[RMDB]
RNA sequence: GGGAACGACUCGAGUAGAGUCGAAAAGGAGUACGGACGACCUUUGCCUACGUGCGGCCAGCGGGAAACCCGCGGACGGCAUGUCACGCGGUCGCGCUUUUACACUUCGGGACCUGGCGAAGGGUGGCCCUGCCUCGUGAUUCGUCACGAGGCAGGGAAAAGAAACAACAACAACAAC
Reactivity to DMS in 0.01 (KOAc 150mM, MgCl2 10mM, bicine 150mM(pH8.5), 24C), signal-to-noise 1, nucleotides 027 to 126: g000g010a040g030u000a130c120g000g000a030c080g000a020c000c010u000u000u000g000c010c050u010a300c000g000u000g000c000g010g000c000c190a160g070c060g170g010g020a140a220a070c140c030c000g000c030g020g010a010c000g000g000c080a010u000g040u000c000a000c010g060c300g000g000u000c080g000c030g000c170u000u000u000u030a090c300a180c210u000u040c050g000g000g000a050c060c000u000g000g070c160g000a130a070g000g020g020u000g000g070
Reactivity to 2A3 in 0.01 (KOAc 150mM, MgCl2 10mM, bicine 150mM(pH8.5), 24C), signal-to-noise 2, nucleotides 027 to 126: g130g010a050g030u170a020c090g000g070a040c040g080a050c010c000u000u030u080g020c000c000u030a040c030g010u050g050c000g040g000c010c000a020g000c000g000g010g130a150a230a160c030c030c000g010c000g020g050a030c070g060g010c030a050u160g020u100c020a030c170g040c010g000g000u000c000g070c000g070c280u000u010u000u070a150c100a060c090u110u150c020g010g000g050a020c020c020u040g030g000c070g020a000a000g000g000g080u090g040g000